[RMDB]
Source: RMDB library M2RFPK, as collected in RNAgym. This 207-nucleotide RNA was probed chemically with 2A3 and DMS. DMS adducts were read by reverse transcription with MarathonRT. The RNA was probed in 150 mM KOAc, 10 mM MgCl2 and 150 mM bicine (pH 8.5) at 24 C.
RNA sequence: GGGAACGACUCGAGUAGAGUCGAAAAUGGCGGGGGCGAAACAGGAGCGACAAGGGUGUAAAGAUCGCUCUUUUACUCGGCAUGAUACCACCGUUAUCGGGUCAACAGAGUAGUUGCAAAUGACAACAAAAGAAUCGCGCGUUCGCGCGCGAUUCAACUUCUUUACGUAGUUCGCUACGUAAAGAAGAAAAGAAACAACAACAACAAC
Reactivity to 2A3 in 0.01 (KOAc 150mM, MgCl2 10mM, bicine 150mM(pH8.5), 24C), signal-to-noise 2, nucleotides 027 to 156: u090g040g020c030g010g000g020g020g000c030g000a010a000a000c080a040g060g000a010g000c000g010a000c040a080a110g080g020g030u070g040u130a050a090a020g020a130u030c010g000c010u020c010u030u030u020u030a040c050u020c010g010g000c020a010u050g010a000u040a050c010c010a010c010c030g060u070u020a030u120c030g000g000g020u010c010a020a020c030a050g090a030g030u100a020g000u030u040g020c050a060a160a200u150g050a110c030a040a020c010a030a130a040a040g000a000a000u000c000g000c010g000c000g010u060u060c160g020c000g010c000g000c000g060a000u000u000c000a000a000
Reactivity to DMS in 0.01 (KOAc 150mM, MgCl2 10mM, bicine 150mM(pH8.5), 24C), signal-to-noise 1, nucleotides 027 to 156: u000g000g010c020g000g030g000g000g090c020g010a060a080a150c130a110g030g000a030g000c030g020a060c100a130a070g040g040g040u000g000u000a090a090a150g000a120u000c030g040c020u010c000u000u000u000u000a040c040u000c080g040g000c050a060u000g020a080u010a040c010c020a210c040c010g000u000u020a070u010c060g030g010g010u010c040a100a110c040a090g020a110g030u020a150g000u000u010g030c010a020a120a040u010g010a140c030a010a130c040a040a050a120a080g010a030a020u000c030g010c000g030c000g040u000u010c300g030c010g000c040g020c000g000a000u000u010c000a070a150